RNA sequence: GGGAACGACUCGAGUAGAGUCGAAAAGUGCCGGCAAUACAGUGUGUAUGGAGUUCUCAAUGGCUCGGAAGUGCCAGCAAACCGGCGUAGAUAUUAGCAGACGUAUGGGCGUAAGACUUUUAUUGAAAAAAGUACAUAAGCUUCGGCUUAUGUACAAGAAUACUAGCGUCUUCGGACGCUAGUAUUCAAAAGAAACAACAACAACAAC
Reactivity to 2A3 in 0.01 (KOAc 150mM, MgCl2 10mM, bicine 150mM(pH8.5), 24C), signal-to-noise 1, nucleotides 027 to 156: g080u050g000c000c000g020g030c000a040a100u150a110c080a100g050u080g000u000g020u130a070u110g090g000a050g050u000u020c050u000c000a040a260u050g000g000c020u000c080g060g090a110a070g010u000g060c010c010a020g050c050a030a020a070c100c020g000g000c000g010u020a040g000a020u040a040u210u110a020g050c000a020g030a070c000g070u110a010u100g150g040g000c070g010u020a020a000g030a020c000u000u080u150u120a100u040u170g030a110a130a040a000a000a000g000u000a000c020a010u000a000a000g020c000u060u070c240g080g000c010u000u000a000u000g010u010a000c000a000a000
Reactivity to DMS in 0.01 (KOAc 150mM, MgCl2 10mM, bicine 150mM(pH8.5), 24C), signal-to-noise 1, nucleotides 027 to 156: g000u000g000c030c010g040g070c020a060a100u000a040c020a150g030u000g030u010g030u000a050u000g010g000a190g020u000u000c040u010c120a140a100u010g010g040c060u010c020g000g000a090a130g040u000g010c020c000a080g000c050a000a140a080c010c000g010g010c050g040u000a040g010a130u000a080u000u000a050g030c000a150g020a060c030g060u000a070u000g030g000g030c010g000u000a070a080g010a130c000u000u000u000u040a070u000u000g000a000a120a040a120a110a160g020u000a000c000a020u000a020a000g090c000u000u010c300g060g000c000u000u000a000u000g000u000a010c010a010a120